[RMDB]
RNA sequence: GGGAACGACUCGAGUAGAGUCGAAAAUUGGCCACCAAACAGAAGCAAUGGGUUCAUGUUUGUGGUGAAGUACAAUCUGACCCAUACCCCCAACAGGCUCAGGCAAUGGAUUGCUUAGUAGAGCAAAUACAUCUCGGAACUUCGGUUCCGAGAUGUAAAAAGAAACAACAACAACAAC
Reactivity to DMS in 0.01 (KOAc 150mM, MgCl2 10mM, bicine 150mM(pH8.5), 24C), signal-to-noise 1, nucleotides 027 to 126: u000u000g020g010c000c010a070c070c040a070a040a020c100a090g000a070a020g020c070a110a140u010g010g000g000u000u000c020a040u000g020u000u000u000g040u010g000g000u000g000a190a170g060u000a000c040a020a000u030c060u000g000a110c000c000c010a040u000a300c020c000c000c010c020a170a110c150a120g010g000c020u010c010a060g030g020c030a010a040u000g000g000a150u000u000g030c000u000u000a120g040u030a130g010a030g010c010a040a020a270
Source information
Chemical mapping of a 177-nucleotide RNA with DMS. DMS (dimethyl sulfate) methylates the pairing face of unpaired adenines and cytosines. It was measured as part of the RMDB library OK2TRN. For DMS, 701 sequencing reads were counted. DMS adducts were read by reverse transcription with MarathonRT. Values cover nucleotides 27 to 126. Reactivities are rounded to 0.1 and cut off at 0 and 3.